[RMDB]
RNA sequence: GGGAACGACUCGAGUAGAGUCGAAAAGCCUUGUUGUUCGCAACAAGGCAAAUGGGACGGGUCGGGAGGGGGAAACUCGCGGUCCCAAGAAGAAUCCAGACUAAAGGCCAAGGUUCGCCUUGGCCAAUCUGGAUUAAGAGUUCGCUCUUAAUCCAGAAAAAGAAACAACAACAACAAC
Reactivity to DMS in 0.01 (KOAc 150mM, MgCl2 10mM, bicine 150mM(pH8.5), 24C), signal-to-noise 1, nucleotides 027 to 126: g000c000c010u000u020g010u000u000g010u000u010c160g010c020a010a010c020a000a000g000g010c010a000a020a050u000g000g000g000a080c120g000g020g020u000c090g010g000g030a090g000g000g070g010g000a040a060a020c020u000c060g040c030g000g010u010c000c000c020a020a100g000a080a140g030a120a060u000c020c020a130g000a070c080u000a100a080a120g010g000c000c000a030a010g000g020u010u000c240g010c010c000u010u000g000g010c000c000a000a010
Reactivity to 2A3 in 0.01 (KOAc 150mM, MgCl2 10mM, bicine 150mM(pH8.5), 24C), signal-to-noise 2, nucleotides 027 to 126: g000c010c010u000u000g000u020u000g010u000u040c210g030c080a000a000c000a000a000g000g010c000a020a000a000u020g000g010g090a040c080g000g020g120u200c080g030g020g100a220g060g020g000g030g030a030a090a060c000u020c020g000c030g020g000u010c000c000c000a020a040g080a050a000g020a020a030u030c050c010a030g060a070c060u130a160a080a060g000g000c000c010a000a000g030g010u030u100c190g070c020c000u000u010g000g000c010c000a000a000

The record gives the reactivity of an RNA of 177 nucleotides to DMS and 2A3. The DMS profile rests on 1,297 reads. For DMS the reverse transcriptase was MarathonRT. 2A3 adducts were read by reverse transcription with SuperScript II with manganese. Conditions: 150 mM KOAc, 10 mM MgCl2 and 150 mM bicine (pH 8.5), 24 C.